[RMDB]
RNA sequence: GGGAACGACUCGAGUAGAGUCGAAAAUCGCGUUGGCUGCCUAAUUCAAGGAAUUAGCGUGUCUUCAUGCUAAGGGUUUGAUAUCUGCUAAAACCCGGUGCAUUCAUCAAUGCAGGUUAAGCCAAAGAAACGGCUCACGAAUUCGUUCGUGAGCCAACACGAAGAUCUGGUUCGCCAGAUCUUCGUGAAAAGAAACAACAACAACAAC
Reactivity to DMS in 0.01 (KOAc 150mM, MgCl2 10mM, bicine 150mM(pH8.5), 24C), signal-to-noise 1, nucleotides 027 to 156: u000c050g030c110g010u000u000g010g030c050u000g000c030c080u010a010a130u000u000c070a170a210g000g020a090a080u000u000a010g030c010g120u000g000u000c170u020u020c030a100u000g020c030u000a120a080g030g020g000u000u000u000g010a070u000a040u000c060u000g010c030u000a060a080a050a080c020c010c000g010g060u010g040c050a130u000u000c020a070u000c090a100a210u000g020c010a020g000g010u000u000a020a030g000c000c040a040a110a110g000a080a090a170c140g030g000c000u000c000a030c000g020a020a130u000u000c280g000u000u000c010g100u040g000a070g010c000c010a000a000
Reactivity to 2A3 in 0.01 (KOAc 150mM, MgCl2 10mM, bicine 150mM(pH8.5), 24C), signal-to-noise 2, nucleotides 027 to 156: u060c010g020c000g040u000u020g040g010c000u080g050c040c000u010a060a060u130u050c190a230a150g220g080a060a070u060u000a020g000c120g000u020g020u040c130u090u130c110a030u060g010c010u050a050a050g040g010g080u000u000u020g040a010u040a040u040c050u130g010c050u060a010a090a030a030c000c000c040g010g000u000g000c000a030u020u100c080a050u080c050a100a110u030g010c010a020g040g010u090u180a050a020g030c000c000a100a000a000g020a050a120a030c110g000g000c010u000c000a000c000g040a060a050u090u060c130g050u080u000c010g040u120g070a000g000c000c000a000a000